This 207-nucleotide RNA was probed chemically with 2A3 and DMS.
RNA sequence: GGGAACGACUCGAGUAGAGUCGAAAAGUCCAGCAACAUAGGAUCUAUGCCAGUUAGGUCCCCUCUGUCCUGCUUCCCUGCUAAGAGAGGGAGAAAUUACUCUCCCAUGGAAUGCUAUUGGUUUCUGGGACUUCCACCUGGGGGCAGUAAAUGGUAACUGACUACUACUGUUCGCAGUAGUAGUCAGAAAAGAAACAACAACAACAAC
Reactivity to 2A3 in 0.01 (KOAc 150mM, MgCl2 10mM, bicine 150mM(pH8.5), 24C), signal-to-noise 3, nucleotides 027 to 156: g020u010c040c000a020g030c040a010a080c010a050u130a080g040g000a020u030c020u030a040u130g160c090c020a080g030u060u020a000g070g010u030c040c030c010c010u060c020u070g060u110c020c000u020g040c020u110u080c000c000c000u040g070c040u140a170a010g070a040g020a080g130g020g010a040g040a010a100a050u200u130a110c020u020c000u000c000c000c000a020u050g030g030a080a080u110g020c030u120a150u130u130g040g020u080u040u050c080u080g060g020g000a050c000u060u040c040c020a050c020c010u020g020g010g010g000g000c010a010g030u080a020a090a080u120g030g000u060a070a020
Reactivity to DMS in 0.01 (KOAc 150mM, MgCl2 10mM, bicine 150mM(pH8.5), 24C), signal-to-noise 1, nucleotides 027 to 156: g030u000c040c010a130g020c080a050a060c080a080u000a070g020g030a090u000c020u000a010u000g010c070c090a120g010u000u000a070g020g000u010c000c010c010c030u000c060u000g030u010c040c040u000g030c080u000u000c020c030c020u000g050c130u000a150a130g020a090g040a140g020g040g000a070g030a070a080a150u000u000a180c090u000c020u000c000c040c010a040u010g000g000a100a120u010g020c030u000a100u010u000g040g010u000u000u000c050u010g010g040g000a090c020u000u000c050c050a110c070c090u010g070g050g040g030g040c020a050g000u010a050a030a140u020g030g020u000a060a270
2A3 adducts were read by reverse transcription with SuperScript II with manganese.
Values cover nucleotides 27 to 156.
The reactions ran in a buffer of 150 mM KOAc, 10 mM MgCl2 and 150 mM bicine (pH 8.5), at 24 C.